[RMDB]
RNA sequence: GGGAACGACUCGAGUAGAGUCGAAAACGGACCGCGAGGAGGUGGAGAUGCCAUGCCGACCCGAAGAGGAAAGAAGAACUCGGACGCGAACCGUGAGUGGAACCCUGAUCCUUUAUUGGGGAGUACAAGCCAGGCUGCUUCGGCAGCCUGAAAAGAAACAACAACAACAAC
Reactivity to DMS in 0.01 (KOAc 150mM, MgCl2 10mM, bicine 150mM(pH8.5), 24C), signal-to-noise 3, nucleotides 027 to 129: c090g100g020a120c020c000g000c090g050a080g020g000a020g030g050u000g020g010a000g010a090u040g040c060c040a070u000g040c100c010g020a090c000c000c000g000a080a030g040a040g020g020a050a060a030g040a050a000g040a020a100c090u000c060g000g050a100c000g000c000g000a030a080c020c040g030u030g000a070g040u030g000g050a050a090c000c000c000u000g010a140u040c040c050u040u050u000a000u050u030g090g000g010g010a070g020u030a100c100a090a110g030c130
Reactivity to 2A3 in 0.01 (KOAc 150mM, MgCl2 10mM, bicine 150mM(pH8.5), 24C), signal-to-noise 3, nucleotides 027 to 129: c030g040g010a060c000c010g020c040g000a030g020g000a010g000g040u080g010g000a100g010a020u130g040c050c010a020u120g040c020c030g040a090c000c010c000g000a030a000g040a080g030g010a070a030a000g040a000a020g020a010a010c040u000c030g000g020a000c020g010c000g020a060a020c010c010g040u030g030a030g030u040g010g060a030a060c000c020c000u010g080a060u070c020c040u080u060u070a200u080u150g000g000g000g000a010g010u030a060c000a070a020g000c010
This 170-nucleotide RNA was probed chemically with DMS and 2A3. It was measured as part of the RMDB library 15KLIB. The reactions ran in a buffer of 150 mM KOAc, 10 mM MgCl2 and 150 mM bicine (pH 8.5), at 24 C.